Chemical mapping of a 177-nucleotide RNA with DMS and 2A3. The data come from the RNA Mapping Database (RMDB), library OK2TRN. The DMS profile rests on 3,665 reads. The RNA was probed in 150 mM KOAc, 10 mM MgCl2 and 150 mM bicine (pH 8.5) at 24 C. Reactivities are given for positions 27 through 126.
[RMDB]
RNA sequence: GGGAACGACUCGAGUAGAGUCGAAAAGUAAGCCCUUUAUCCCUUCACAGAGCUUAUUUUUAAGGGUACCGGUUCCGAUUCACACUGCUUCAUUUGUCUGGGAAAGGGCUCAAAGCAGUAAUGUGGGAUCCUUCUAAACGUUCGCGUUUAGAAGGAUAAAAGAAACAACAACAACAAC
Reactivity to DMS in 0.01 (KOAc 150mM, MgCl2 10mM, bicine 150mM(pH8.5), 24C), signal-to-noise 3, nucleotides 027 to 126: g010u000a040a040g000c000c020c010u000u000u010a150u020c020c010c020u000u010c110a120c220a050g010a050g010c020u000u000a020u000u010u010u010u010a070a130g010g000g010u000a080c050c020g020g010u000u000c010c020g010a150u000u000c030a040c080a090c030u000g000c010u000u010c120a150u010u000u010g010u000c040u000g010g020g000a080a080a110g010g010g000c010u010c110a050a030a040g000c020a020g000u010a060a070u010g020u010g000g000g010
Reactivity to 2A3 in 0.01 (KOAc 150mM, MgCl2 10mM, bicine 150mM(pH8.5), 24C), signal-to-noise 1, nucleotides 027 to 126: g050u060a090a030g000c000c000c000u000u020u010a110u060c020c010c000u100u100c050a050c040a070g090a030g070c090u140u100a090u070u140u050u040u100a110a040g020g060g030u030a050c000c020g030g000u000u020c000c020g050a050u140u070c010a020c010a010c020u000g000c010u050u050c020a200u060u050u170g000u040c020u040g040g020g020a080a080a020g090g000g000c010u010c020a070a070a000g000c000a010g000u090a130a120u160g010u060g040g000g040